Conditions: 150 mM KOAc, 10 mM MgCl2 and 150 mM bicine (pH 8.5), 24 C.
This 177-nucleotide RNA was probed chemically with DMS and 2A3.
The 2A3 profile rests on 7,420 reads.
Reactivities are given for positions 27 through 126.
[RMDB]
RNA sequence: GGGAACGACUCGAGUAGAGUCGAAAAGGUUCCGGAAGGUUGGCCAAUUAAUUCCGGCCAAUUCCGGUUGGAAGGAACCAAGGCCGGCCAAGGCCUUCCGGUUGGCCAAUUAAGGUUAAGGUUAAGGACGUAAAACUAAGUUCGCUUAGUUUUACGUAAAAGAAACAACAACAACAAC
Reactivity to DMS in 0.01 (KOAc 150mM, MgCl2 10mM, bicine 150mM(pH8.5), 24C), signal-to-noise 9, nucleotides 027 to 126: g010g010u000u000c010c000g010g000a030a020g010g020u000u000g010g010c020c010a090a140u010u000a130a300u010u000c040c020g010g000c010c000a030a080u000u000c180c110g010g020u000u000g000g010a050a040g000g000a030a020c080c100a100a150g000g010c120c060g020g010c110c100a070a110g010g000c000c000u000u000c010c010g010g000u000u010g000g010c010c000a080a130u010u010a070a100g010g010u010u000a060a110g010g010u010u000a080a110g010g000
Reactivity to 2A3 in 0.01 (KOAc 150mM, MgCl2 10mM, bicine 150mM(pH8.5), 24C), signal-to-noise 4, nucleotides 027 to 126: g030g010u060u040c010c000g000g020a010a000g020g040u160u140g020g000c010c020a030a020u090u100a080a070u080u020c030c000g000g000c010c000a010a010u110u030c060c100g070g000u010u020g010g010a020a010g000g010a020a010c020c020a020a020g040g000c040c030g000g020c030c020a050a070g120g040c010c000u010u000c000c000g000g020u040u080g010g000c000c000a040a040u180u110a130a040g090g020u060u060a040a020g060g040u070u090a060a060g100g030